[RMDB]
RNA sequence: GGGAACGACUCGAGUAGAGUCGAAAAGAAGAGCAGGCUGAUAAUCUUGUGCAGUAUGCAUGCUCGUAACUCCAGCGCACAAGUGGAAGCACAAGAUUUUAAUCCAGCAUAGCGCAGGAGCCGCAGAGGCUCCGGACGGAUUCGUCCGUCCGGAGCCAAAAGAAACAACAACAACAAC
Reactivity to DMS in 0.01 (KOAc 150mM, MgCl2 10mM, bicine 150mM(pH8.5), 24C), signal-to-noise 1, nucleotides 027 to 126: g000a130a050g000a040g000c000a110g000g020c020u000g000a100u010a050a000u000c000u020u000g000u000g000c040a070g010u000a140u030g000c080a050u020g000c000u000c000g000u000a140a070c030u000c000c040a110g000c000g010c030a160c090a180a140g000u000g000g000a110a190g000c000a000c030a000a090g000a040u000u000u000u000a120a090u000c180c000a020g010c100a120u000a130g090c000g100c020a040g000g000a000g000c050c100g020c150a140g050a300
Reactivity to 2A3 in 0.01 (KOAc 150mM, MgCl2 10mM, bicine 150mM(pH8.5), 24C), signal-to-noise 1, nucleotides 027 to 126: g100a050a000g020a010g000c000a030g070g000c040u100g050a130u080a150a010u020c000u000u000g000u000g000c020a060g080u120a010u070g070c060a000u020g010c010u000c030g000u020a010a010c040u020c000c000a000g000c000g000c000a020c010a120a230g020u070g060g040a070a000g000c000a000c000a010a000g000a000u030u030u040u120a110a080u070c020c000a000g030c000a150u120a090g000c010g020c010a050g000g000a010g000c000c010g010c000a030g020a070
The record gives the reactivity of an RNA of 177 nucleotides to DMS and 2A3. For DMS the reverse transcriptase was MarathonRT. For DMS, 1,248 sequencing reads were counted.